[RMDB]
RNA sequence: GGGAACGACUCGAGUAGAGUCGAAAACGUAAUAUGUUCGCAUAUUACGAAAUCUCCAAUCAUGGCUAACCAGGAUCCUCCGAUGUAUUAAAGCCCUCGGUAAAAGGAGCGGGUUCGCCCGCUCCAAGCAUUAAGUCAUGUUCGCAUGACUUAAUGCAAAAGAAACAACAACAACAAC
Reactivity to 2A3 in 0.01 (KOAc 150mM, MgCl2 10mM, bicine 150mM(pH8.5), 24C), signal-to-noise 2, nucleotides 027 to 126: c000g000u020a000a010u010a010u020g000u000u030c100g020c140a010u020a000u000u020a020c000g010a060a010a030u060c060u000c020c020a050a090u090c050a070u120g020g000c020u050a020a060c020c010a030g060g000a070u010c010c040u000c010c030g070a070u060g060u160a100u130u220a170a110a050g000c000c000c030u040c040g060g080u120a070a080a080a080g000g000a000g000c000g000g000g050u030u040c170g050c030c000c010g000c000u000c000c000a000a000
Reactivity to DMS in 0.01 (KOAc 150mM, MgCl2 10mM, bicine 150mM(pH8.5), 24C), signal-to-noise 2, nucleotides 027 to 126: c010g030u010a000a000u000a010u010g000u000u000c170g030c000a000u000a010u000u000a000c010g010a030a080a110u010c060u000c010c100a120a110u010c080a040u000g000g000c060u000a090a060c070c030a050g020g000a060u000c060c020u000c030c050g010a050u010g000u010a070u000u000a050a070a170g010c070c010c050u000c080g000g010u020a040a040a080a100g010g000a010g000c000g010g000g010u000u020c220g000c010c000c010g020c010u000c000c000a000a070